[RMDB]
RNA sequence: GGGAACGACUCGAGUAGAGUCGAAAAACUAGGAGUCUACGGACUCCUAGAAAAGUCAUUCUAAGUAGUAGUGCCGCAGGUAACAACAAUUGAGUUUACCUGUUCUCUGCUACUUAACAUGACCAAACUAGUAAUAGAGAUUCGUCUCUAUUACUAGAAAAGAAACAACAACAACAAC
Reactivity to DMS in 0.01 (KOAc 150mM, MgCl2 10mM, bicine 150mM(pH8.5), 24C), signal-to-noise 9, nucleotides 027 to 126: a080c010u000a000g000g000a010g010u000c000u000a120c210g030g000a010c000u000c000c000u000a000g000a020a020a060a100g000u000c000a000u000u000c100u000a010a010g000u000a000g020u000a010g010u000g000c210c180g000c010a000g000g010u000a000a020c080a120a100c200a130a180u030u020g010a150g010u030u000u000a010c000c000u000g000u000u020c020u000c010u000g020c000u000a000c000u000u000a000a040c080a000u000g000a010c000c150a050a060a110
Reactivity to 2A3 in 0.01 (KOAc 150mM, MgCl2 10mM, bicine 150mM(pH8.5), 24C), signal-to-noise 9, nucleotides 027 to 126: a000c000u000a000g000g000a000g000u000c000u020a040c250g080g000a000c000u000c000c000u000a000g000a000a000a000a000g000u000c000a000u030u010c010u020a000a000g000u000a000g000u000a000g010u000g090c130c060g020c030a000g000g010u020a030a020c080a020a030c040a140a250u190u300g080a110g080u040u040u020a000c000c000u000g010u060u010c000u000c000u000g000c000u000a000c000u000u000a000a000c000a000u000g000a000c010c080a020a040a010